An RNA of 177 nucleotides, treated with DMS and 2A3 and read out base by base.
The DMS profile rests on 1,687 reads.

RNA sequence: GGGAACGACUCGAGUAGAGUCGAAAAGCUGUGGUGGAUGACCGGAACAACGGCGAGUUGCUCGACCGGCCCGAGGACGGUGCCCAAUGAGCGGCGACCUCGACCGGCAGCGCAUGUGGAACAACGGUGGUUUUCAUAACUUCGGUUAUGAAAACCAAAAAGAAACAACAACAACAAC
Reactivity to DMS in 0.01 (KOAc 150mM, MgCl2 10mM, bicine 150mM(pH8.5), 24C), signal-to-noise 2, nucleotides 027 to 126: g000c030u000g050u000g000g010u000g030g000a060u010g000a090c020c040g000g020a110a070c150a050a100c140g010g010c050g010a100g040u010u010g020c020u000c080g010a150c030c000g000g020c070c070c010g000a020g000g000a090c030g010g000u000g010c000c030c120a080a120u010g010a090g020c020g020g010c000g010a080c000c030u000c030g000a120c000c020g000g000c040a050g000c080g010c020a040u010g010u000g000g000a060a030c060a040a080c100g040g000
Reactivity to 2A3 in 0.01 (KOAc 150mM, MgCl2 10mM, bicine 150mM(pH8.5), 24C), signal-to-noise 1, nucleotides 027 to 126: g010c040u060g010u010g080g000u000g000g080a080u110g060a130c010c000g050g020a030a050c040a070a020c060g070g060c020g030a050g070u120u150g060c050u120c120g080a210c010c000g010g030c070c150c080g010a020g060g000a010c030g030g300u120g000c000c000c100a110a210u220g000a040g030c030g050g000c000g040a030c000c010u010c000g000a080c000c000g000g040c030a000g000c030g000c010a010u050g060u100g130g090a130a030c040a070a040c080g010g000
For 2A3, 744 sequencing reads were counted.